[RMDB]
RNA sequence: GGGAACGACUCGAGUAGAGUCGAAAAGAUAUGGAGAAAGGCAUCGAUCUAUUCGUCGGAAACGACGACGGUAGGGAGCCUGCUCCUAAGUCAAAGAGUCUGGUGUCCUUCGGGACACCAGACUCAAGUUAGCGUAAUUCUUCGGAAUUACGCUAACAAAAGAAACAACAACAACAAC
Reactivity to 2A3 in 0.01 (KOAc 150mM, MgCl2 10mM, bicine 150mM(pH8.5), 24C), signal-to-noise 2, nucleotides 027 to 126: g000a050u070a070u100g030g010a080g010a180a300a010g050g000c030a150u300c210g120a070u040c030u040a020u190u300c010g010u010c020g030g080a130a250a210c060g210a050c000g000a000c000g070g040u050a010g060g050g010a010g000c020c010u000g020c010u000c000c010u010a110a030g040u020c040a040a020a170g000a000g000u020c000u070g010g050u040g030u040c020c000u080u120c300g020g000g000a000c010a000c010c000a000g000a000c000u000c000a000a000
Reactivity to DMS in 0.01 (KOAc 150mM, MgCl2 10mM, bicine 150mM(pH8.5), 24C), signal-to-noise 2, nucleotides 027 to 126: g000a010u000a300u000g020g000a030g030a060a070a010g000g000c010a220u000c080g010a080u030c000u020a040u010u010c000g040u010c000g010g000a110a080a190c160g000a080c010g020a010c300g000g050u000a020g020g020g010a020g010c010c000u000g000c010u010c010c000u010a010a080g000u000c040a040a040a090g020a000g030u000c000u010g000g000u020g020u000c010c010u000u010c300g030g000g010a000c000a000c000c000a010g000a000c000u000c000a010a070